[RMDB]
RNA sequence: GGGAACGACUCGAGUAGAGUCGAAAAGAUAUGGAUACACCAGGGAGCCUAUCCGUCGGAAACGACGGUAAGGGCGAAGAACUGGGUAUCCUAAGUCAAAAUCAGCUCUUGUUCGCAAGAGCUGAAACUAAACGGUGUUGUUCGCAACACCGUUUAGAAAAGAAACAACAACAACAAC
Reactivity to 2A3 in 0.01 (KOAc 150mM, MgCl2 10mM, bicine 150mM(pH8.5), 24C), signal-to-noise 2, nucleotides 027 to 126: g010a000u000a000u060g000g000a020u030a000c100a300c220c010a000g000g040g030a010g000c020c000u070a110u090c020c020g020u020c000g000g040a010a010a000c000g010a000c070g030g000u020a100a100g080g000g040c000g010a110a000g000a010a000c010u000g010g020g000u010a000u010c000c000u010a010a010g000u010c030a000a000a030a300u050c000a010g000c000u030c000u040u050g100u150u160c300g000c190a000a010g010a000g000c000u010g010a000a000a000
Reactivity to DMS in 0.01 (KOAc 150mM, MgCl2 10mM, bicine 150mM(pH8.5), 24C), signal-to-noise 2, nucleotides 027 to 126: g000a010u000a010u030g000g000a030u010a000c000a200c000c000a030g000g000g030a030g000c000c010u000a240u010c010c000g010u000c010g030g000a010a010a020c010g030a000c010g010g000u010a030a100g050g000g030c000g000a050a140g020a170a300c010u000g000g000g010u000a010u010c000c000u000a000a060g000u000c020a090a090a160a180u000c000a010g010c000u000c000u000u000g010u010u010c230g010c000a010a000g000a020g000c000u010g000a000a060a180

Chemical mapping of a 177-nucleotide RNA with 2A3 and DMS. For DMS, 2,016 sequencing reads were counted. The data come from the RNA Mapping Database (RMDB), library TTRDES. For 2A3, 3,868 sequencing reads were counted. Conditions: 150 mM KOAc, 10 mM MgCl2 and 150 mM bicine (pH 8.5), 24 C.